[RMDB]
RNA sequence: GGGAACGACUCGAGUAGAGUCGAAAAACGGCGCCGUUACGACGGCGCCGAUUGAAAUAUUGCGUAGGCAUUGUGCACAGUUGGUCAAUCUCGCUGUGCAUUCUACCUAUACAGUGUUUCGGGCUAAAACCACCUUGGUUUUCGAACCAAGGUGGUUAAAAGAAACAACAACAACAAC
Reactivity to 2A3 in 0.01 (KOAc 150mM, MgCl2 10mM, bicine 150mM(pH8.5), 24C), signal-to-noise 1, nucleotides 027 to 126: a000c000g000g030c000g000c000c000g000u020u090a120c300g020a030c000g050g070c000g000c060c000g020a000u000u200g000a020a000a000u010a030u000u000g000c030g000u010a000g000g010c040a030u010u010g000u000g010c000a000c000a000g020u110u020g020g070u250c160a160a140u060c060u130c130g000c000u000g000u000g020c000a000u000u000c000u000a010c000c000u000a010u000a030c000a000g030u000g050u000u000u000c000g120g000g000c060u080a230a000

Overview
This 177-nucleotide RNA was probed chemically with 2A3. The reactions ran in a buffer of 150 mM KOAc, 10 mM MgCl2 and 150 mM bicine (pH 8.5), at 24 C. The data come from the RNA Mapping Database (RMDB), library RFM100. For 2A3 the reverse transcriptase was SuperScript II with manganese.